[RMDB]
RNA sequence: GGGAACGACUCGAGUAGAGUCGAAAAGACUUCCUAGGAUCGACUUCAGAGGAAGAGCUCUUCUCGAAGGAGAAGAGGAGAAGUCCUAGGAGACUUCUCUCCUAGAGGAUCAGUCGAGAGAUCCUAGUCUCUCCUGAUCUCUCCUGAUCCUGAUCUCGUUGGGGUCAAAAUUCGUUUUGACCCCAACAAAAGAAACAACAACAACAAC
Reactivity to 2A3 in 0.01 (KOAc 150mM, MgCl2 10mM, bicine 150mM(pH8.5), 24C), signal-to-noise 1, nucleotides 027 to 156: g000a040c040u040u000c010c020u010a050g090g000a030u040c030g050a050c030u000u000c060a060g070a060g300g060a090a060g010a080g110c000u000c000u000u020c000u000c000g100a110a070g150g000a000g010a000a000g010a020g010g020a100g000a030a000g020u000c000c000u000a000g050g020a000g020a010c040u120u030c070u050c010u010c060c000u020a040g010a030g070g000a010u000c000a000g080u180c100g020a000g020a000g000a010u010c020c000u080a130g090u070c100u030c030u010c080c010u050g020a020u030c010u010c020u000c020c000u000g000a000u010c000c020u000g010a010u000c060u000c080

The record gives the reactivity of an RNA of 207 nucleotides to 2A3. It was measured as part of the RMDB library OK3TST. The RNA was probed in 150 mM KOAc, 10 mM MgCl2 and 150 mM bicine (pH 8.5) at 24 C. Reactivities are given for positions 27 through 156. For 2A3, 630 sequencing reads were counted.